This 177-nucleotide RNA was probed chemically with 2A3 and DMS. The reactions ran in a buffer of 150 mM KOAc, 10 mM MgCl2 and 150 mM bicine (pH 8.5), at 24 C.
RNA sequence: GGGAACGACUCGAGUAGAGUCGAAAAAGGACGAGAAGGGGAACUGCUAGCUCCUUCAACUCGUUCUGUCCGGUGAGAAGUGAUCAAGCCUGGCUGACAAGAGGCUCAGGGAGCCCUCACGUACUUUAACUCUUCAAUGUUUCGACAUUGAAGAGUUAAAAGAAACAACAACAACAAC
Reactivity to 2A3 in 0.01 (KOAc 150mM, MgCl2 10mM, bicine 150mM(pH8.5), 24C), signal-to-noise 5, nucleotides 027 to 126: a000g010g010a000c000g010a000g030a030a020g020g000g010g030a020a040c030u130g130c060u190a070g020c010u010c000c000u080u040c000a010a040c000u000c000g020u000u000c010u000g010u000c000c010g060g000u050g010a030g030a120a070g030u090g090a090u080c080a090a050g070c000c010u040g050g000c030u070g040a060c020a090a140g050a090g130g000c110u070c100a040g000g040g050a020g020c010c010c010u000c000a010c060g020u050a050c020u000u000u010
Reactivity to DMS in 0.01 (KOAc 150mM, MgCl2 10mM, bicine 150mM(pH8.5), 24C), signal-to-noise 7, nucleotides 027 to 126: a020g010g000a000c000g010a010g010a060a300g000g010g000g000a020a060c020u010g010c220u030a100g030c050u000c000c000u020u040c030a030a300c030u000c000g000u000u000c000u000g000u010c000c000g020g020u000g010a050g000a100a120g030u020g000a170u030c080a130a120g010c030c010u000g020g010c040u000g000a140c270a120a120g000a130g000g010c000u000c060a060g010g010g010a230g000c050c050c030u010c010a030c040g000u030a080c080u010u000u000